[RMDB]
RNA sequence: GGGAACGACUCGAGUAGAGUCGAAAACUUCCUUCUGAGAAGAGGAGACAGCUUGCCGCUCGCCCCCAGACCCGAGAUGAGCCUCGUGCCGAGGAGAGGCCGGAGACGGAGAGGCAGGAGGUCCCGAUGAGAUGGCGGUUCGCCGCCAUCAAAAGAAACAACAACAACAAC
Reactivity to DMS in 0.01 (KOAc 150mM, MgCl2 10mM, bicine 150mM(pH8.5), 24C), signal-to-noise 2, nucleotides 027 to 129: c160u040u010c000c000u000u070c080u050g010a100g000a100a100g000a060g080g030a070g020a070c080a040g040c060u020u050g060c000c030g040c000u080c110g080c010c020c020c070c050a100g010a160c160c010c020g030a000g020a050u000g030a000g040c030c010u010c030g020u060g040c080c020g000a060g080g010a100g030a060g040g030c030c020g000g000a080g020a060c110g030g030a040g050a000g030g050c070a030g010g020a060g050g000u040c000c020c020g040a040u030g010a120
Reactivity to 2A3 in 0.01 (KOAc 150mM, MgCl2 10mM, bicine 150mM(pH8.5), 24C), signal-to-noise 3, nucleotides 027 to 129: c000u030u040c020c000u090u100c110u130g080a050g020a090a030g040a030g050g020a040g010a040c040a000g020c020u110u100g040c010c020g040c030u060c020g040c000c000c020c000c030a050g040a090c010c020c010g020a030g000a070u050g010a020g010c000c000u000c010g050u080g080c020c000g040a040g000g000a040g020a030g020g030c000c000g040g010a050g010a010c010g040g000a050g010a000g020g000c020a010g030g050a000g030g000u020c020c000c000g000a030u130g020a020
This 170-nucleotide RNA was probed chemically with DMS and 2A3. Conditions: 150 mM KOAc, 10 mM MgCl2 and 150 mM bicine (pH 8.5), 24 C. The DMS profile rests on 11,284 reads. It was measured as part of the RMDB library 15KLIB.